[RMDB]
RNA sequence: GGGAACGACUCGAGUAGAGUCGAAAAGUGCAGCGCGUACAGCGCGGUCGCCAGGUAGGGCCUGGCCCGGACCGCGUGCAGCCGCGCGGCGAACAGUUUGUCGCGGUCCAGGACCGCGCCGGCCGUACACGCGGUAGGGCUUCGGCCCUACCGCGUGAAAAGAAACAACAACAACAAC
Reactivity to DMS in 0.01 (KOAc 150mM, MgCl2 10mM, bicine 150mM(pH8.5), 24C), signal-to-noise 1, nucleotides 027 to 126: g020u000g010c010a120g000c000g000c060g010u030a070c180a300g010c000g030c000g000g000u020c040g010c010c040a080g000g010u000a060g000g010g010c040c030u000g000g000c080c230c120g000g000a090c020c000g010c000g030u010g000c160a080g000c070c000g020c050g000c000g000g000c030g010a100a080c150a040g020u000u010u020g040u000c040g000c020g020g000u000c010c120a190g050g010a060c000c010g000c020g010c040c030g020g000c010c050g030u000a160
Reactivity to 2A3 in 0.01 (KOAc 150mM, MgCl2 10mM, bicine 150mM(pH8.5), 24C), signal-to-noise 1, nucleotides 027 to 126: g120u150g010c070a060g010c040g010c010g050u100a110c080a060g030c010g020c040g020g000u010c020g010c010c050a000g000g050u110a080g080g160g180c000c010u020g000g000c040c000c000g170g000a000c010c010g000c000g020u070g020c010a010g020c020c010g030c040g000c050g000g020c000g030a220a010c020a050g190u180u300u300g020u160c020g000c010g000g000u040c070c060a200g050g120a070c000c000g000c000g000c000c010g020g050c000c040g010u090a030